[RMDB]
RNA sequence: GGGAACGACUCGAGUAGAGUCGAAAAACUUCCCUACGCUGUGGGACAUGCAUCCGUAGACCAUUUCUCUGCUGUAAAUGCUGCUAUGAUCAUGUUAUAGCAACUCCACAUAAGAUGGUUUUGUCUGACGCCAGAAACUUCGGUUUCUGGAAAAGAAACAACAACAACAAC
Reactivity to DMS in 0.01 (KOAc 150mM, MgCl2 10mM, bicine 150mM(pH8.5), 24C), signal-to-noise 6, nucleotides 027 to 129: a090c300u000u010c020c010c010u040a000c040g020c040u010g030u020g010g000g010a060c160a000u010g040c010a040u030c100c130g000u050a060g000a000c110c010a050u000u000u000c050u040c120u050g040c050u040g000u040a010a010a010u050g010c010u030g020c000u050a020u030g030a040u040c130a080u070g050u000u000a030u050a010g030c000a040a130c040u000c020c050a000c080a110u060a050a070g000a090u000g000g000u010u000u010u000g010u000c000u040g020a180c210g020
Reactivity to 2A3 in 0.01 (KOAc 150mM, MgCl2 10mM, bicine 150mM(pH8.5), 24C), signal-to-noise 8, nucleotides 027 to 129: a000c020u030u020c010c000c000u000a020c070g010c010u020g020u040g010g000g000a010c010a070u080g010c020a030u070c050c040g030u040a030g090a100c010c030a020u000u050u020c050u010c060u110g120c020u050g050u190a020a040a070u110g050c040u020g030c010u050a050u080g030a060u090c040a080u270g010u050u060a070u040a020g020c000a000a030c010u020c040c010a030c030a090u180a090a070g100a100u090g050g000u010u030u080u090g090u000c030u030g010a020c090g030
An RNA of 170 nucleotides, treated with DMS and 2A3 and read out base by base. It was measured as part of the RMDB library 15KLIB. For 2A3 the reverse transcriptase was SuperScript II with manganese. The RNA was probed in 150 mM KOAc, 10 mM MgCl2 and 150 mM bicine (pH 8.5) at 24 C. DMS (dimethyl sulfate) methylates the pairing face of unpaired adenines and cytosines.